[RMDB]
RNA sequence: GGGAACGACUCGAGUAGAGUCGAAAAUUUAGACUUUGUGUCUACUCUUCUCAACUAAACGAAAUUUUUCUAGUGCUGUCAUUUGUUAUGGCAGUCCUAGUGUAAUUGAAAUUUCGUCAAGUUUGUAGCUAAACAAAAAGUUCGCUUUUUGUUUAGCAAAAGAAACAACAACAACAAC
Reactivity to 2A3 in 0.01 (KOAc 150mM, MgCl2 10mM, bicine 150mM(pH8.5), 24C), signal-to-noise 4, nucleotides 027 to 126: u050u030u010a000g010a000c010u100u150u300g180u130g000u050c010u010a040c040u020c010u080u030c010u010c010a010a030c010u050a090a040a000c000g010a010a000a020u010u020u020u070u020c010u000a000g010u010g020c010u010g000u000c010a030u030u180u250g250u280u280a000u010g000g000c000a000g010u000c000c000u000a000g010u000g040u090a100a180u070u120g030a000a000a010u000u020u010c000g000u000c020a070a020g010u030u050u120g030u020a030
Reactivity to DMS in 0.01 (KOAc 150mM, MgCl2 10mM, bicine 150mM(pH8.5), 24C), signal-to-noise 2, nucleotides 027 to 126: u000u000u000a020g010a010c000u010u000u000g020u020g010u000c000u000a020c190u000c080u000u000c020u000c020a030a030c030u000a120a140a010c000g000a010a010a010u000u000u000u000u000c000u000a020g020u000g000c010u000g010u000c000a010u000u010u000g010u000u010a010u010g000g000c000a000g010u000c190c000u000a000g010u000g020u010a090a120u020u000g000a010a010a020u000u000u000c000g010u000c120a120a040g000u000u010u000g020u010a190

About this RNA
Structure probing data (2A3 and DMS) for a 177-nucleotide construct. Conditions: 150 mM KOAc, 10 mM MgCl2 and 150 mM bicine (pH 8.5), 24 C.